[RMDB]
RNA sequence: GGGAACGACUCGAGUAGAGUCGAAAACAGUCACAGAGAUAUUCUCGAAAACACUUCUUAGUCAGACUAAAGAUGAUGGACUUACAAACCAACACCUGAAAGAAGAAAUAUUAAGUACUGCCCAUAGUGAGUUCUGGCUGUCAAAUGAAAGGCAUGGCACUGAUGAAUUUUUCGAAAUUCAUCAGUGAAAAGAAACAACAACAACAAC
Reactivity to DMS in 0.01 (KOAc 150mM, MgCl2 10mM, bicine 150mM(pH8.5), 24C), signal-to-noise 3, nucleotides 027 to 156: c040a100g020u000c030a110c090a260g020a120g030a130u000a060u000u010c010u000c030g010a130a090a130a140c040a100c020u000u010c020u010u000a080g030u000c060a080g000a220c080u000a070a110a040g000a060u010g000a160u000g020g000a080c080u000u020a110c130a070a130a140c030c010a080a120c020a040c010c020u010g000a080a060a100g040a080a120g010a060a100a090u000a070u000u010a050a140g000u000a070c060u010g000c000c010c020a100u000a040g020u000g000a050g000u000u000c010u000g000g010c010u000g000u010c030a030a060a120u000g000a040a020a050g020g000c040a050u000g020g000
Reactivity to 2A3 in 0.01 (KOAc 150mM, MgCl2 10mM, bicine 150mM(pH8.5), 24C), signal-to-noise 5, nucleotides 027 to 156: c020a010g040u070c040a010c040a080g070a020g030a060u090a120u290u060c040u040c040g060a100a070a100a010c050a020c010u040u020c010u070u090a100g050u080c020a020g030a140c040u120a160a160a010g060a090u070g000a020u040g000g020a030c040u130u160a070c180a050a070a030c020c010a030a020c010a040c020c020u050g040a050a030a020g010a040a000g000a040a100a010u170a050u110u130a080a040g020u050a040c010u050g030c000c010c020a020u040a020g090u070g040a040g020u050u040c030u040g030g030c020u020g020u050c030a080a110a110u170g030a140a070a030g020g000c020a020u060g060g000